[RMDB]
RNA sequence: GGGAACGACUCGAGUAGAGUCGAAAAGCGUACUACUAUCACCCUUAGUUCAACAGCCUAUAGUAAGGUCCCAAAUAGGACCUUACAAUAGGACAUGAACUAAUGUGCUGAUAGUAUCGCAAAGUUAGGUCAGGAGCUUCGGCUCCUGACCUAACAAGUUAAGCGUAAAGUUCGCUUUACGCUUAACAAAAGAAACAACAACAACAAC
Reactivity to DMS in 0.01 (KOAc 150mM, MgCl2 10mM, bicine 150mM(pH8.5), 24C), signal-to-noise 1, nucleotides 027 to 156: g000c020g020u010a060c060u000a020c020u000a000u000c000a050c040c000c020u010u000a010g000u000u020c000a070a090c070a240g000c010c000u020a020u010a160g010u000a000a020g000g000u000c000c000c020a050a230a300u000a050g010g020a040c000c000u010u010a000c000a080a000u000a000g030g020a040c050a300u000g020a010a000c000u000a000a010u000g010u010g000c010u010g010a020u000a020g040u000a000u020c020g040c020a070a060a140g010u000u000a000g000g010u000c020a030g060g000a040g060c000u000u000c300g020g020c000u000c000c000u010g000a000c000c000u000a000a000c020a040a190
Reactivity to 2A3 in 0.01 (KOAc 150mM, MgCl2 10mM, bicine 150mM(pH8.5), 24C), signal-to-noise 4, nucleotides 027 to 156: g000c000g040u110a090c060u000a010c010u000a030u000c000a010c000c000c020u000u000a000g000u000u000c010a080a060c030a210g050c010c000u010a020u020a040g000u010a000a010g020g010u000c030c070c040a300a300a060u300a070g000g000a000c000c010u000u000a000c000a000a000u000a000g000g030a020c010a080u050g000a000a000c000u000a020a010u070g050u100g030c170u000g000a010u020a000g020u020a030u180c000g020c010a030a020a000g000u000u000a000g010g000u010c000a000g020g010a010g020c030u110u160c300g060g000c000u010c000c000u000g000a000c000c000u000a000a000c000a000a000